The data come from the RNA Mapping Database (RMDB), library OK2TRN. An RNA of 177 nucleotides, treated with DMS and 2A3 and read out base by base. The DMS profile rests on 37,739 reads. DMS adducts were read by reverse transcription with MarathonRT.
RNA sequence: GGGAACGACUCGAGUAGAGUCGAAAAUGUGUGAGAAAGUAAAGGGUAUGAGACAUGACGGAAUUAAAGGUGUUUGCUAUGUUGUUACACCGUGUGUCAGGCUGCAAGCUCCCUUUGUCACAGCCUCCUCAUUCCUACUAUUCGUAGUAGGAAUGAGAAAAGAAACAACAACAACAAC
Reactivity to DMS in 0.01 (KOAc 150mM, MgCl2 10mM, bicine 150mM(pH8.5), 24C), signal-to-noise 9, nucleotides 027 to 126: u010g020u000g030u000g010a050g010a050a060a060g010u010a080a080a070g010g000g020u000a110u010g010a100g010a060c040a060u000g000a040c040g020g010a100a120u010u010a060a090a110g010g010u000g010u000u010u000g010c070u000a090u010g010u010u000g010u000u000a040c040a030c010c010g010u010g020u000g010u000c020a040g000g010c020u000g010c070a050a300g000c060u000c020c040c000u000u000u000g000u000c030a030c030a060g010c050c030u000c210
Reactivity to 2A3 in 0.01 (KOAc 150mM, MgCl2 10mM, bicine 150mM(pH8.5), 24C), signal-to-noise 8, nucleotides 027 to 126: u100g030u020g010u010g020a050g080a030a110a010g060u160a090a050a030g050g010g010u090a070u200g080a050g020a030c040a060u060g050a020c020g050g090a120a070u200u140a170a120a070g040g010u050g040u080u150u040g040c020u080a090u300g210u180u060g020u090u110a020c030a010c010c000g020u040g000u010g010u030c010a020g030g020c020u090g070c070a070a040g000c020u040c000c000c020u010u020u010g080u010c010a010c000a030g010c000c000u040c010